Description: An RNA of 207 nucleotides, treated with DMS and 2A3 and read out base by base. 2A3 adducts were read by reverse transcription with SuperScript II with manganese. The 2A3 profile rests on 1,675 reads. For DMS, 3,036 sequencing reads were counted. Source: RMDB library M2RFPK, as collected in RNAgym. DMS adducts were read by reverse transcription with MarathonRT. Values cover nucleotides 27 to 156.
[RMDB]
RNA sequence: GGGAACGACUCGAGUAGAGUCGAAAAGAAAGAGCAGCACACAGCGAUGAAGAUCCGGGCUGGAUUCUAGAGCACGGUCGCCCCAGCGCGGCCCGGGAAGUCAGUGGCAAGACCGCCUGAGCAGCAACAGAGUCGCCCAGGUUCGCCUGGGCGACAACAAUCAUGAACUGUUCGCAGUUCAUGAUUGAAAAGAAACAACAACAACAAC
Reactivity to DMS in 0.01 (KOAc 150mM, MgCl2 10mM, bicine 150mM(pH8.5), 24C), signal-to-noise 2, nucleotides 027 to 156: g010a070a040a100g030a050g010c020a060g010c030a080c060a100c110a120g000c040g020a080u000g020a100a130g010a110u010c020c000g000g000g040c030u000g030g020a160u000u010c080u000a140g000a110g020c060a080c050g000g020u000c060g020c000c030c030c170a110g000c060g010c030g040g010c030c000c040g020g000g000a060a040g000u000c030a050g030u000g050g000c050a080a070g000a090c020c040g010c020c050u010g000a100g000c030a060g050c030a060a130c090a170g020a180g010u000c000g030c000c000c010a050g000g000u010u010c260g030c020c060u000g010g040g040c000g000a000c000a010a060
Reactivity to 2A3 in 0.01 (KOAc 150mM, MgCl2 10mM, bicine 150mM(pH8.5), 24C), signal-to-noise 2, nucleotides 027 to 156: g040a020a050a010g070a000g030c030a000g020c030a020c000a020c020a080g050c030g060a050u050g070a080a040g010a040u030c020c030g000g040g050c050u080g080g000a080u080u070c020u090a060g010a020g090c030a030c050g010g020u010c000g010c000c010c020c040a080g000c070g010c020g030g000c000c010c000g000g010g020a020a000g040u040c030a000g010u020g030g040c030a080a000g040a070c010c030g020c020c020u070g010a010g040c010a000g030c000a000a070c010a100g060a020g090u020c000g000c010c000c000a000g010g040u050u030c130g030c060c010u010g000g040g000c000g000a000c000a030a000